Conditions: 150 mM KOAc, 10 mM MgCl2 and 150 mM bicine (pH 8.5), 24 C. Structure probing data (DMS and 2A3) for a 177-nucleotide construct. For 2A3, 7,295 sequencing reads were counted.

RNA sequence: GGGAACGACUCGAGUAGAGUCGAAAAGAUAUGGAGUGCGAUGAAACUCAUGACAAUGACGUCGGAAACGAUAAGACAGUCAGAGUGGAGCACUCCUAAGUCAAACCAUGAGCUUCGGCUCAUGGAAUCCUUAGCUUAACUUCGGUUAAGCUAAGGAAAAAGAAACAACAACAACAAC
Reactivity to DMS in 0.01 (KOAc 150mM, MgCl2 10mM, bicine 150mM(pH8.5), 24C), signal-to-noise 4, nucleotides 027 to 126: g000a040u000a300u010g000g000a020g020u000g000c010g000a110u000g020a150a110a040c000u010c000a120u000g020a010c010a110a110u020g010a100c300g010u010c010g000g010a100a060a160c000g000a020u010a090a100g010a140c120a090g020u000c000a020g010a010g000u000g000g000a060g020c000a000c010u010c000c000u000a000a070g000u000c030a100a080a210c010c000a000u000g000a000g000c000u000u020c230g020g000c000u000c000a010u000g000g000a020a030
Reactivity to 2A3 in 0.01 (KOAc 150mM, MgCl2 10mM, bicine 150mM(pH8.5), 24C), signal-to-noise 4, nucleotides 027 to 126: g040a010u040a040u170g010g000a010g000u020g010c040g140a300u040g020a030a040a000c040u050c170a300u030g000a000c000a070a290u130g010a010c090g020u020c000g030g020a100a120a040c020g010a020u030a130a100g110a050c030a010g010u010c000a000g000a000g000u010g000g010a000g000c010a010c000u000c000c000u000a030a000g000u000c010a010a020a060c010c000a000u000g000a000g010c100u140u190c300g130g000c000u000c000a000u010g000g010a010a060
For 2A3 the reverse transcriptase was SuperScript II with manganese. DMS adducts were read by reverse transcription with MarathonRT.